[RMDB]
RNA sequence: GGGAACGACUCGAGUAGAGUCGAAAAUUGUCCAUAUAGUUUAAGAUGGAAACAUAUUACAAGAUAUUUACUCUUGUUAGGUGAAAGUUGAUGGUCGCCGAGCCAGUCCGUACAUCCAAAAAGGACUCGCAUACUAUAAGUUCGCUUAUAGUAUGCGAAAAGAAACAACAACAACAAC
Reactivity to 2A3 in 0.01 (KOAc 150mM, MgCl2 10mM, bicine 150mM(pH8.5), 24C), signal-to-noise 1, nucleotides 027 to 126: u040u030g000u040c000c000a010u050a010u050a130g090u120u240u120a140a050g020a020u030g010g010a090a010a000c010a030u190a030u070u100a000c010a000a000g010a000u030a120u260u300u140a120c060u020c000u000u000g000u000u070a080g130g000u010g040a170a060a040g060u100u060g040a060u060g040g030u030c070g000c060c040g030a000g010c000c010a000g050u000c000c010g000u000a010c010a070u050c060c020a050a030a030a050a070g030g020a000c000u010
Reactivity to DMS in 0.01 (KOAc 150mM, MgCl2 10mM, bicine 150mM(pH8.5), 24C), signal-to-noise 2, nucleotides 027 to 126: u030u010g020u010c000c020a070u000a050u000a160g010u010u000u000a070a160g010a020u010g000g000a120a060a150c040a060u010a040u010u000a030c020a010a030g000a010u000a090u020u000u020a100c140u000c010u020u010g010u000u010a090g000g030u000g000a120a070a080g000u000u010g000a110u000g010g010u000c030g020c030c070g000a090g020c070c060a050g000u010c020c000g030u000a090c140a100u000c020c070a040a030a120a090a140g000g010a040c070u000